This 177-nucleotide RNA was probed chemically with 2A3 and DMS. For DMS, 11,262 sequencing reads were counted. For 2A3, 22,141 sequencing reads were counted. Source: RMDB library M2PK50, as collected in RNAgym. DMS adducts were read by reverse transcription with MarathonRT.
[RMDB]
RNA sequence: GGGAACGACUCGAGUAGAGUCGAAAACGACUUACCUUCGGGUAAGUCGACAUAGGUGACUUCAUCGGAUAGCUGCCUAGGUGAGUUCAUCGGAUAGCUGCCACAUGUAACGGUUCGCCGUUACAAACUAUCGGGUAUAUUUCGAUAUACCCGAUAGAAAAGAAACAACAACAACAAC
Reactivity to 2A3 in 0.01 (KOAc 150mM, MgCl2 10mM, bicine 150mM(pH8.5), 24C), signal-to-noise 7, nucleotides 027 to 126: c000g000a000c000u000u000a010c000c000u030u060c230g040g000g000u000a000a000g000u000c000g000a000c000a050u170a050g040g010u030g020a030c010u070u020c080a040u050c050g070g040a070u060a090g040c060u090g050c040c030u070a120g000g050u030g040a080g040u080u090c030a020u040c030g020g030a060u090a050g040c050u060g040c020c010a080c020a120u110g000u010a010a000c010g000g030u050u050c210g020c060c000g000u010u010a010c000a020a010a010
Reactivity to DMS in 0.01 (KOAc 150mM, MgCl2 10mM, bicine 150mM(pH8.5), 24C), signal-to-noise 6, nucleotides 027 to 126: c020g010a020c000u000u000a000c000c010u000u010c220g030g000g010u000a000a000g000u000c000g010a040c140a070u010a100g010g020u000g000a040c030u000u010c050a060u010c040g010g010a080u000a060g010c030u000g010c030c020u010a090g030g010u000g000a070g010u000u000c050a030u000c030g000g000a080u010a060g010c040u000g010c030c030a090c190a110u000g000u000a000a000c000g000g010u000u010c220g020c000c000g000u000u000a010c010a030a070a160